[RMDB]
RNA sequence: GGGAACGACUCGAGUAGAGUCGAAAAAAAAACGCUGGGCCUGUGGUGUACACAAGGAGGUAUAAUUAACUGAAGCGCGCACGGUUAAUUGCGAACUUGGUACACGUAACAUCAGGCCUGUGCUGAAGCGCGCACGGCAACCGAAAGGUGCGAAAAAGACCGCUAUAUAGUUCGCUAUAUAGCGGUCAAAAGAAACAACAACAACAAC
Reactivity to 2A3 in 0.01 (KOAc 150mM, MgCl2 10mM, bicine 150mM(pH8.5), 24C), signal-to-noise 1, nucleotides 027 to 156: a040a000a040a000a000c040g000c020u030g000g020g010c030c030u020g030u090g070g000u020g040u040a040c300a010c040a000a010g060g070a060g000g110u060a110u030a170a000u000u000a000a000c000u010g070a210a030g040c000g010c020g000c020a000c000g020g000u000u000a000a000u000u070g120c070g070a070a040c020u000u020g010g000u000a000c000a020c020g030u140a130a000c020a110u210c010a020g020g000c000c020u000g010u020g000c020u020g020a120a030g000c000g030c020g040c050a010c000g020g020c000a040a060c020c000g060a020a030a080g000g000u050g040c030g050a050a200a000a020a130